This 177-nucleotide RNA was probed chemically with 2A3 and DMS. For DMS, 3,862 sequencing reads were counted. Conditions: 150 mM KOAc, 10 mM MgCl2 and 150 mM bicine (pH 8.5), 24 C. For 2A3, 9,307 sequencing reads were counted.
[RMDB]
RNA sequence: GGGAACGACUCGAGUAGAGUCGAAAAUGCCUGCACCCACUUUUCGAGGAUGUCUUCCCUUCCUCCCCUCCGGGAUUUCUUCUGAUCGGACUGGCUCAUCCUCGGAAACGGGGGCGGCGGCGUCCGUCCCUGUACCUAUGUUCGCAUAGGUACAGGGAAAAGAAACAACAACAACAAC
Reactivity to 2A3 in 0.01 (KOAc 150mM, MgCl2 10mM, bicine 150mM(pH8.5), 24C), signal-to-noise 3, nucleotides 027 to 126: u070g010c000c050u090g010c010a110c010c010c000a100c050u020u020u010u020c010g000a000g000g000a010u010g030u000c040u030u040c020c010c000u020u030c020c030u020c020c010c000c010u060c010c020g040g010g030a050u080u100u030c040u110u020c020u070g020a030u040c020g010g010a010c040u020g030g010c010u010c010a000u000c000c000u000c010g000g000a000a010a020c030g010g000g000g010g020c020g020g000c000g000g020c020g040u010c010c000g010u010
Reactivity to DMS in 0.01 (KOAc 150mM, MgCl2 10mM, bicine 150mM(pH8.5), 24C), signal-to-noise 3, nucleotides 027 to 126: u010g000c010c010u010g030c040a170c000c000c000a110c140u000u000u010u000c010g000a030g010g000a010u000g000u020c080u010u000c020c010c040u000u000c020c060u000c020c010c000c050u000c060c040g020g010g010a140u000u000u010c090u010u000c100u000g000a110u000c070g000g000a080c180u000g010g010c150u010c000a030u000c010c000u000c000g000g000a010a010a030c260g010g000g000g000g020c070g000g010c040g010g000c110g000u000c010c010g000u010